Structure probing data (DMS and 2A3) for a 177-nucleotide construct.
Conditions: 150 mM KOAc, 10 mM MgCl2 and 150 mM bicine (pH 8.5), 24 C.
For DMS the reverse transcriptase was MarathonRT.
For 2A3 the reverse transcriptase was SuperScript II with manganese.
Values cover nucleotides 27 to 126.
[RMDB]
RNA sequence: GGGAACGACUCGAGUAGAGUCGAAAAGGAGGUGGUCCGACAAAUUGAGUGAUUUAUGGACAUGUGAGGUGGCUGCCCGCUAGCAGCGCCGGGGUAAAGCCUGCGCGCGCUGGCGAAUUCCCCGCAGCGUUUAGUAGUAAUUCGUUACUACUAAACGAAAAGAAACAACAACAACAAC
Reactivity to DMS in 0.01 (KOAc 150mM, MgCl2 10mM, bicine 150mM(pH8.5), 24C), signal-to-noise 9, nucleotides 027 to 126: g010g010a110g010g020u010g010g020u000c010c010g010a090c130a030a050a080u010u010g010a150g020u020g000a090u010u010u020a090u020g000g010a090c090a090u010g010u010g010a100g010g020u010g010g010c020u000g010c030c050c010g000c010u000a010g010c010a100g030c010g010c010c010g000g000g000g000u000a090a110a280g000c000c000u000g000c160g010c010g020c020g010c000u000g000g010c000g000a070a130u010u000c010c000c000c170g010c160a100g010
Reactivity to 2A3 in 0.01 (KOAc 150mM, MgCl2 10mM, bicine 150mM(pH8.5), 24C), signal-to-noise 9, nucleotides 027 to 126: g120g030a040g010g030u050g010g010u000c010c010g030a030c070a020a130a060u140u190g060a070g100u130g080a110u050u100u140a160u210g080g020a020c040a060u110g040u060g070a090g030g040u080g030g000c010u020g010c000c010c000g000c020u010a000g000c140a050g000c000g000c010c010g000g000g000g010u070a050a040a040g110c000c000u060g000c060g000c000g000c020g000c070u010g000g000c000g000a000a020u030u010c000c000c000c010g030c050a060g040